[RMDB]
RNA sequence: GGGAACGACUCGAGUAGAGUCGAAAAUCAUGCGAUUCACCUGCAUGGCGCACAGGCGCUUCUGCUCGUCCAUGGGCAGUGUGCGGGAUGGGUGGGCAAAAAGGGGGUCAUUCUCCAGGCGACGCCACCAGUGAUUUACGUUCGCGUAAAUCACUGGAAAAGAAACAACAACAACAAC
Reactivity to 2A3 in 0.01 (KOAc 150mM, MgCl2 10mM, bicine 150mM(pH8.5), 24C), signal-to-noise 5, nucleotides 027 to 126: u150c020a020u040g020c030g110a090u070u130c040a050c050c010u010g020c020a030u030g030g000c050g020c020a070c010a050g100g000c020g010c010u100u060c000u040g010c000u000c020g180u110c110c090a220u240g000g000g000c030a020g020u000g030u030g050c010g000g010g030a070u090g010g030g080u200g010g000g000c020a060a050a010a080a090g060g010g000g010g030u060c030a060u090u010c050u000c040c010a000g030g000c010g020a020c060g010c030c000a000
Reactivity to DMS in 0.01 (KOAc 150mM, MgCl2 10mM, bicine 150mM(pH8.5), 24C), signal-to-noise 2, nucleotides 027 to 126: u010c020a070u010g000c020g000a110u010u020c000a010c030c040u010g000c000a040u000g000g000c070g000c070a130c070a160g000g020c060g000c050u000u000c050u020g000c000u000c000g030u020c170c130a120u110g030g010g020c020a000g010u020g000u020g050c010g000g000g000a090u000g000g000g000u010g000g000g020c170a070a030a050a050a050g010g000g010g060g040u000c100a090u000u000c030u020c000c010a040g020g020c040g020a020c060g040c000c050a230